This 207-nucleotide RNA was probed chemically with 2A3.
[RMDB]
RNA sequence: GGGAACGACUCGAGUAGAGUCGAAAAUAAAGGGGCUUUUGCUCAAGAGAUGCAACAAGCAGGAGUCGGUGAGUACGUCGGGUCUAAGUCAAUGGAAAUGAUUGCUCAUGCGUUUGAUCCUUUGAUUCAGCUUUUGGUCGCUCUCUCGUUGCCUGUCCAACCGCUUGUGUUUCGACACAAGCGGUUGAAAAGAAACAACAACAACAAC
Reactivity to 2A3 in 0.01 (KOAc 150mM, MgCl2 10mM, bicine 150mM(pH8.5), 24C), signal-to-noise 2, nucleotides 027 to 156: u290a070a040a040g010g010g010g020c040u040u080u100u130g040c010u010c030a030a020g080a000g020a020u190g020c050a080a040c000a060a070g010c030a030g000g050a010g110u050c010g040g000u030g020a070g020u060a100c070g010u030c030g020g090g020u000c020u070a100a000g020u020c070a040a070u070g020g060a000a030a050u120g010a020u050u210g000c000u070c060a030u210g050c010g040u010u010u110g040a050u000c000c000u030u000u080g030a050u100u000c030a070g010c020u010u040u130u270g060g000u080c020g010c010u000c000u000c000u000c000g040u020u040g040c020c020u070g060u010c020
The reactions ran in a buffer of 150 mM KOAc, 10 mM MgCl2 and 150 mM bicine (pH 8.5), at 24 C. High 2A3 reactivity points to a flexible backbone, as in loops and unpaired stretches.